[RMDB]
This 177-nucleotide RNA was probed chemically with DMS and 2A3.
For 2A3, 955 sequencing reads were counted.
2A3 adducts were read by reverse transcription with SuperScript II with manganese.
RNA sequence: GGGAACGACUCGAGUAGAGUCGAAAACUGCUGGCUUCCCGCGGUGCGGAAGUGCUGUUGCUGUCGGACCUGUUGACUGAGGCACUACAUCACAGCGGGGCCGCCCGCAUGCAGGGGAUCGCCGCUGUGCACCUUGCGUGUUCGCACGCAAGGUGCAAAAAGAAACAACAACAACAAC
Reactivity to DMS in 0.01 (KOAc 150mM, MgCl2 10mM, bicine 150mM(pH8.5), 24C), signal-to-noise 2, nucleotides 027 to 126: c030u000g020c020u000g030g010c040u000u020c010c010c010g020c050g020g000u020g020c080g000g010a110a060g030u000g000c020u000g000u000u000g010c030u000g000u010c080g010g010a200c040c030u000g000u010u000g010a110c250u010g000a080g010g000c180a040c050u000a050c050a010u010c010a040c020a030g000c010g000g020g020g000c050c020g020c000c010c010g020c020a100u000g000c170a150g010g000g000g000a050u000c160g000c010c010g000c030u010g000
Reactivity to 2A3 in 0.01 (KOAc 150mM, MgCl2 10mM, bicine 150mM(pH8.5), 24C), signal-to-noise 1, nucleotides 027 to 126: c020u040g000c080u060g000g000c010u060u020c050c010c040g000c000g000g000u210g020c030g000g060a080a090g120u010g020c030u120g080u240u080g020c000u020g050u030c050g050g090a190c000c000u110g130u110u210g160a140c150u180g050a080g010g080c060a000c030u050a000c000a020u020c070a040c000a000g000c000g100g000g050g010c010c010g000c020c020c030g010c040a060u210g000c040a010g010g000g000g000a020u110c080g020c020c040g000c010u080g040